[RMDB]
RNA sequence: GGGAACGACUCGAGUAGAGUCGAAAAGUUCGGGCCUUCGGGCCCGAACAAAUAAUCCAGCCUGGAAAGGCUGGAGCCUAAACUAUGGUAAAGGCACCAUAGAAACCACAUGGUUCGCCAUGUGGAAGAUGUUUACUUUCUUCGGAAAGUAAACAUCAAAAGAAACAACAACAACAAC
Reactivity to DMS in 0.01 (KOAc 150mM, MgCl2 10mM, bicine 150mM(pH8.5), 24C), signal-to-noise 2, nucleotides 027 to 126: g000u000u010c020g010g040g040c000c000u000u020c200g040g030g020c000c000c000g000a000a020c010a000a060a100u000a160a100u000c000c000a030g010c000c000u000g020g060a130a130a010g020g000c000u000g000g000a000g010c010c010u000a060a130a170c000u000a000u000g000g000u000a090a110a110g000g010c110a060c000c000a020u000a000g000a140a100a210c000c000a000c000a010u000g000g000u000u020c150g000c010c000a010u000g000u000g000g010a030a030
Reactivity to 2A3 in 0.01 (KOAc 150mM, MgCl2 10mM, bicine 150mM(pH8.5), 24C), signal-to-noise 1, nucleotides 027 to 126: g030u010u020c030g020g060g010c010c040u120u090c270g050g000g040c060c000c000g010a000a000c010a000a010a000u010a000a000u000c000c000a010g020c020c000u050g050g120a190a060a000g000g010c010u000g010g020a020g000c010c010u080a120a070a030c000u000a000u020g000g030u100a100a300a300g210g020c100a010c010c000a000u010a000g030a110a040a030c010c000a010c010a020u000g020g090u030u040c180g070c090c000a010u000g020u000g000g010a010a010